[RMDB]
RNA sequence: GGGAACGACUCGAGUAGAGUCGAAAAGUUAGGUGAGGCUCCUAUGCAAACACAGGACACUGCCCAAAAAUGUCCAAAGACGCCAAUGGGUAGAACAGGGAUUGUCGGAUUAAGGCUUUCCAUAAUGAAAACAAAGUAUGCUUCGGCAUACUUUGAAUCAAUUGUUGUUCUUCGGAACAACAAUUGAAAAAGAAACAACAACAACAAC
Reactivity to DMS in 0.01 (KOAc 150mM, MgCl2 10mM, bicine 150mM(pH8.5), 24C), signal-to-noise 2, nucleotides 027 to 156: g000u000u000a040g020g020u000g030a130g000g050c050u000c030c050u010a100u000g000c040a140a150a100c070a070c030a060g000g010a090c040a130c020u010g020c010c010c040a020a070a050a110a100u000g010u010c000c030a100a140a200g020a080c050g050c020c020a010a290u000g020g030g010u000a040g010a070a110c080a110g000g010g010a100u000u000g010u010c030g000g000a150u000u000a070a100g010g040c060u000u010u000c050c030a050u020a060a070u000g000a090a060a050a220c000a010a010a010g000u000a010u010g000c000u000u000c300g060g000c000a000u000a000c010u020u000u000g010a030a120
Reactivity to 2A3 in 0.01 (KOAc 150mM, MgCl2 10mM, bicine 150mM(pH8.5), 24C), signal-to-noise 3, nucleotides 027 to 156: g050u050u050a030g000g040u040g070a040g110g000c040u030c010c010u070a080u130g060c060a040a110a050c030a020c030a080g020g020a000c010a000c050u010g010c000c000c030a010a040a010a000a010u020g000u020c020c020a170a090a070g000a010c030g020c020c020a010a040u020g020g000g010u030a020g030a080a040c080a070g000g050g020a030u020u040g030u050c020g030g020a070u110u130a110a060g030g000c000u050u030u050c000c000a040u080a160a120u160g080a010a100a000a010c000a000a000a000g000u000a000u000g000c000u010u080c240g080g000c000a000u000a000c000u000u000u000g000a000a000